[RMDB]
RNA sequence: GGGAACGACUCGAGUAGAGUCGAAAAGGUUAAGGCCCCUAAAUACUGGAUAAGUGUAAGGGAGUCUUUGGCCCAAGACAAUGGGAAGGUGGGCUUAGAAGCAGCCACCCUUUAACGAGUUCGUAACCAUCUGCGAGUUGUUCGCAACUCGCAGAUGAAAAGAAACAACAACAACAAC
Reactivity to 2A3 in 0.01 (KOAc 150mM, MgCl2 10mM, bicine 150mM(pH8.5), 24C), signal-to-noise 2, nucleotides 027 to 126: g000g000u000u020a000a000g020g000c000c000c000c000u050a160a290a000u070a050c010u030g120g080a060u020a300a030g060u000g000u020a020a050g000g000g030a130g050u000c000u000u010u010g040g000c050c000c000a080a000g000a010c010a050a190u140g000g030g050a040a090g070g040u080g000g120g060c060u070u080a090g050a300a000g180c110a000g080c030c000a010c000c000c000u000u100u010a050a000c000g000a000g000u190u100c000g000u010a010a010c000
Reactivity to DMS in 0.01 (KOAc 150mM, MgCl2 10mM, bicine 150mM(pH8.5), 24C), signal-to-noise 1, nucleotides 027 to 126: g000g080u000u000a000a000g040g000c000c000c030c050u020a090a130a020u000a020c000u010g010g030a150u070a160a040g000u020g010u020a110a130g010g000g010a080g020u010c000u000u010u020g010g000c000c010c040a180a170g010a000c110a190a040u000g010g020g000a060a080g010g040u000g000g000g000c000u000u020a110g000a080a140g000c190a220g040c010c020a030c030c000c000u010u000u000a160a230c010g000a010g000u000u010c000g000u000a060a200c000
Structure probing data (2A3 and DMS) for a 177-nucleotide construct. Reactivities are given for positions 27 through 126. Reactivities are rounded to 0.1 and cut off at 0 and 3. Conditions: 150 mM KOAc, 10 mM MgCl2 and 150 mM bicine (pH 8.5), 24 C.